[RMDB]
RNA sequence: GGGAACGACUCGAGUAGAGUCGAAAAUUGCGCUUGCCUAUUUAGGCAUACUUGUCAGGAUGGCGCGUUGCAGUCCAACAAGAUCCAGGGACUGUACAGAAUUUUCCUAUACCUCGAGUCGGGUUUGAAAACGUUAGGCACUUCGGUGCCUAACGAAGACUAUGAUAUAGUUCGCUAUAUCAUAGUCAAAAGAAACAACAACAACAAC
Reactivity to 2A3 in 0.01 (KOAc 150mM, MgCl2 10mM, bicine 150mM(pH8.5), 24C), signal-to-noise 8, nucleotides 027 to 156: u030u060g000c010g010c020u070u160g080c020c020u150a230u210u220u280a040g020g000c000a020u090a120c100u160u160g060u120c070a050g000g070a160u090g020g000c010g000c020g020u020u020g000c000a000g000u000c020c000a050a030c060a190a170g100a220u130c080c070a040g010g010g010a000c000u000g010u000a030c020a030g220a070a020u000u000u000u020c000c000u010a030u020a080c040c050u010c000g000a000g000u010c030g000g010g000u060u070u060g060a060a060a000a000c010g000u010u000a000g000g000c010a000c010u020u040c210g070g000u000g000c000c000u000a000a000c000g000a000a000
Reactivity to DMS in 0.01 (KOAc 150mM, MgCl2 10mM, bicine 150mM(pH8.5), 24C), signal-to-noise 2, nucleotides 027 to 156: u000u000g020c020g020c030u000u010g030c000c000u040a210u000u010u000a090g030g020c040a040u000a030c110u000u000g010u000c060a210g010g020a140u000g000g050c000g030c080g010u000u000g010c000a070g010u000c010c000a160a300c080a090a130g010a140u010c070c040a210g010g000g010a030c010u000g010u000a040c050a160g010a050a090u000u000u000u010c010c000u000a080u000a020c090c030u000c010g000a060g020u000c010g010g000g010u000u000u000g000a040a060a070a140c010g010u000u000a000g010g030c020a040c000u000u000c260g060g000u010g000c030c000u020a000a010c000g030a040a060

Structure probing data (2A3 and DMS) for a 207-nucleotide construct. Conditions: 150 mM KOAc, 10 mM MgCl2 and 150 mM bicine (pH 8.5), 24 C. 2A3 adducts were read by reverse transcription with SuperScript II with manganese. The data come from the RNA Mapping Database (RMDB), library M2RFPK.